RNA sequence: GGGAACGACUCGAGUAGAGUCGAAAAUCUUUAAGUCGAUUUGCGACUUCGUUGAGGAGAGCCAAUUCGUUUCGUAAUAUCGAGCUAAAUGCGGAUAAUGAAAGAUCCUUUUUCAAAGAGAGUAACGGAAGUAAUAGCCAUUCGUGGCUAUUACUUCAAAAGAAACAACAACAACAAC
Reactivity to 2A3 in 0.01 (KOAc 150mM, MgCl2 10mM, bicine 150mM(pH8.5), 24C), signal-to-noise 3, nucleotides 027 to 126: u030c010u030u120u070a110a040g090u020c000g010a020u000u000u050g050c000g020a060c090u040u000c030g010u000u060g010a020g030g070a200g010a070g290c010c010a020a020u020u040c030g020u000u040u000c000g000u010a000a040u030a040u170c010g000a030g100c030u060a080a080a100u180g060c100g030g030a020u060a120a140u240g140a070a040a050g080a020u020c010c010u040u050u020u040u050c120a070a130a030g100a030g000a020g060u080a070a060c080g080
Reactivity to DMS in 0.01 (KOAc 150mM, MgCl2 10mM, bicine 150mM(pH8.5), 24C), signal-to-noise 5, nucleotides 027 to 126: u010c020u000u010u010a090a090g020u000c030g040a100u010u000u010g010c020g000a020c120u000u010c060g030u010u000g010a300g010g000a210g010a090g010c040c020a030a180u000u000c040g010u000u000u000c010g020u000a040a060u000a030u000c020g010a060g030c060u000a050a060a050u000g010c130g010g000a030u000a050a070u000g010a100a060a090g000a070u000c020c010u000u000u010u010u000c080a050a080a110g020a080g010a080g020u010a060a120c200g010
Structure probing data (2A3 and DMS) for a 177-nucleotide construct. 2A3 adducts were read by reverse transcription with SuperScript II with manganese. The reactions ran in a buffer of 150 mM KOAc, 10 mM MgCl2 and 150 mM bicine (pH 8.5), at 24 C.